[RMDB]
RNA sequence: GGGAACGACUCGAGUAGAGUCGAAAAACAGCACCAGAUAGUACAUUCAACCUUGCUAAUAAUAGUGAUAGCGAUUUAGGUAAUUUCUUGUGUCGUCCAAUAAAUGUGGCGACAUAUCAAUGGGAUGUAGAUUCUCCGUUGUUUGAGACAUUAAAUCUCCUUACUCUUACUUCGGUAAGAGUAAGGAAAAAGAAACAACAACAACAAC
Reactivity to DMS in 0.01 (KOAc 150mM, MgCl2 10mM, bicine 150mM(pH8.5), 24C), signal-to-noise 1, nucleotides 027 to 156: a020c050a100g000c050a210c050c020a070g000a100u000a150g000u000a040c030a090u030u010c020a180a050c000c050u000u020g020c030u000a010a090u000a060a150u000a110g000u000g010a070u010a040g010c020g040a140u000u010u010a020g020g000u000a070a080u000u000u000c030u020u020g000u010g030u000c020g000u020c000c040a080a210u000a110a090a140u000g000u000g010g000c030g010a040c010a010u000a010u000c040a030a080u020g000g070g010a010u000g020u000a050g000a090u010u000c020u000c010c020g010u000u000g040u000u000u000g000a210g000a090c060a090u010u010a040a070a150u000c060
Reactivity to 2A3 in 0.01 (KOAc 150mM, MgCl2 10mM, bicine 150mM(pH8.5), 24C), signal-to-noise 2, nucleotides 027 to 156: a000c060a040g100c150a030c070c000a020g000a010u140a010g040u050a020c020a030u020u050c050a060a020c010c010u110u030g020c020u050a070a060u120a300a120u170a170g110u030g170a040u010a000g010c060g030a110u050u110u260a030g000g000u020a030a090u050u090u020c090u140u030g020u000g000u010c020g000u020c000c030a040a040u200a140a090a080u290g030u060g070g010c030g000a000c000a000u020a030u010c060a060a040u100g060g000g010a000u010g010u060a080g020a190u110u000c000u010c090c130g000u020u030g050u000u070u100g030a090g010a020c010a010u060u150a050a040a070u000c010